[RMDB]
RNA sequence: GGGAACGACUCGAGUAGAGUCGAAAACCCUCCCUUCGGGGAGGGAAAAAAUCCUAAGUCUCCCGACGAUGUGUACAUAGUGAUGACCUAUCGGAAACGAUAGCAAGCUGGGUACACAUUAGGGAGAUAUGGAAAAAAAGCGCGGUUCGCCGCGCAAGUAGAAUGUUCUCUUCGGAGAACAUUCUACAAAAGAAACAACAACAACAAC
Reactivity to 2A3 in 0.01 (KOAc 150mM, MgCl2 10mM, bicine 150mM(pH8.5), 24C), signal-to-noise 1, nucleotides 027 to 156: c000c000c020u030c010c000c030u010u140c300g010g000g000g030a000g000g010g060a020a000a010a000a000a010u040c050c010u050a110a050g020u060c010u000c000c000c000g040a120c120g000a030u020g010u000g010u010a000c020a030u050a020g030u040g110a300u070g050a110c020c000u010a000u000c000g020g050a150a100a000c020g000a010u010a000g000c000a200a030g050c000u030g020g030g000u020a010c000a010c000a000u020u010a010g000g000g000a010g000a000u000a000u000g000g020a010a050a010a010a050a050a030g070c060g010c020g010g030u060u120c170g040c080c000g000c000g020c000a000a000